Notes
An RNA of 177 nucleotides, treated with 2A3 and DMS and read out base by base. For 2A3, 4,206 sequencing reads were counted. For 2A3 the reverse transcriptase was SuperScript II with manganese. Conditions: 150 mM KOAc, 10 mM MgCl2 and 150 mM bicine (pH 8.5), 24 C. Source: RMDB library TTRINS, as collected in RNAgym.
[RMDB]
RNA sequence: GGGAACGACUCGAGUAGAGUCGAAAAGAUAUGGACAGAGGAGUGGCAAUCCGAAGAACUAUUGGAUAGGUCGGAAACGACCUAUCCAAUAGGGAGGAUUGAACUACCACGAAUCUGUCCUAAGUCAGUUCUGGUAUAUGUUCGCAUAUACCAGAACAAAAGAAACAACAACAACAAC
Reactivity to 2A3 in 0.01 (KOAc 150mM, MgCl2 10mM, bicine 150mM(pH8.5), 24C), signal-to-noise 1, nucleotides 027 to 126: g010a010u110a030u130g000g000a000c030a000g020a020g030g040a050g000u020g010g020c000a000a000u010c010c050g110a220a080g000a240a280c010u010a010u000u000g000g000a000u010a000g000g020u000c030g020g070a100a030a030c020g000a010c000c010u020a010u000c000c010a000a000u000a000g000g010g010a010g000g000a000u010u010g010a030a010c100u190a070c080c000a000c000g000a020a000u000c000u000g010u020c000c000u010a000a000g030u000c020a010
Reactivity to DMS in 0.01 (KOAc 150mM, MgCl2 10mM, bicine 150mM(pH8.5), 24C), signal-to-noise 3, nucleotides 027 to 126: g010a030u000a300u020g000g000a020c010a000g010a030g010g000a300g000u000g000g000c010a020a000u000c000c000g000a140a120g000a210a160c000u000a010u000u000g010g000a000u000a020g000g000u000c010g020g010a090a110a170c000g020a040c000c010u000a000u000c010c000a000a000u010a000g010g000g000a130g010g000a000u000u000g000a040a020c110u010a300c040c020a000c040g000a300a190u000c000u000g000u000c010c000u000a020a100g010u000c040a100